Chemical mapping of a 177-nucleotide RNA with 2A3 and DMS. 2A3 adducts were read by reverse transcription with SuperScript II with manganese.
[RMDB]
RNA sequence: GGGAACGACUCGAGUAGAGUCGAAAAAUUAUGUGGUUAUCCAACCUACGGCGCGGCAAAUCUUCAAAUGUUGGGACAACGUCAAGUUUUCCGCUGUGAUUGAUGCCUUACAUGCUCGUGGUUAUGAGAUUAGCGAUGCUUUCGAGCAUCGCUAAUCAAAAGAAACAACAACAACAAC
Reactivity to 2A3 in 0.01 (KOAc 150mM, MgCl2 10mM, bicine 150mM(pH8.5), 24C), signal-to-noise 2, nucleotides 027 to 126: a000u220u210a200u150g080u050g020g080u020u030a110u110c050c060a020a050c010c000u000a000c000g000g090c040g000c000g070g030c000a000a000a220u030c010u080u030c060a130a150a240u130g060u130u300g100g030g000a040c050a050a000c000g110u160c050a020a050g010u000u000u030u020c000c000g000c030u020g040u040g090a060u060u000g020a030u060g000c010c000u110u070a060c030a060u200g000c000u030c170g020u030g000g040u050u010a100u260g050a050
Reactivity to DMS in 0.01 (KOAc 150mM, MgCl2 10mM, bicine 150mM(pH8.5), 24C), signal-to-noise 1, nucleotides 027 to 126: a110u020u010a060u000g020u000g000g000u010u010a070u000c040c010a110a100c050c000u010a040c060g000g040c030g030c190g010g000c090a030a010a120u000c060u000u000c110a080a070a050u010g010u000u000g060g010g010a040c140a010a000c040g010u000c240a100a120g000u010u010u010u000c010c020g010c000u010g000u000g010a060u000u020g010a200u000g000c030c010u000u000a070c140a090u010g010c050u000c020g000u010g000g020u000u020a060u000g010a220

For 2A3, 813 sequencing reads were counted.